[RMDB]
RNA sequence: GGGAACGACUCGAGUAGAGUCGAAAAGAUAUGGAGUAGGUACGGAGCGAAGAACAUUAUCGGAAACGAUAAUGGGAGCUCGGUACUACUCCUAAGUCAAAAUCAAGGGACGUUCGCGUCCCUUGAACAACCUAUUCGUGUUCGCACGAAUAGGUUGAAAAGAAACAACAACAACAAC
Reactivity to DMS in 0.01 (KOAc 150mM, MgCl2 10mM, bicine 150mM(pH8.5), 24C), signal-to-noise 3, nucleotides 027 to 126: g020a010u000a300u000g010g010a020g010u000a010g010g020u010a000c000g010g050a030g020c000g000a110a190g010a100a200c020a000u000u000a000u000c020g000g000a160a090a240c000g000a020u010a000a000u000g000g020g000a080g010c020u010c000g010g020u000a020c000u010a000c000u000c000c000u010a000a060g000u000c040a120a110a150a170u000c010a010a000g010g010g000a010c000g010u000u020c270g010c020g030u000c000c000c010u000u010g000a010a170
Reactivity to 2A3 in 0.01 (KOAc 150mM, MgCl2 10mM, bicine 150mM(pH8.5), 24C), signal-to-noise 2, nucleotides 027 to 126: g030a010u090a040u150g010g020a020g000u060a020g190g290u060a030c130g190g020a010g010c010g180a300a010g020a080a020c000a010u000u000a030u020c010g020g060a070a070a080c000g000a000u000a000a000u010g000g000g010a010g020c020u000c110g030g000u050a010c000u000a000c000u000c010c000u010a050a020g000u020c010a040a040a010a300u060c000a000a000g030g000g000a000c000g020u080u050c290g020c010g080u030c000c000c000u000u000g000a000a000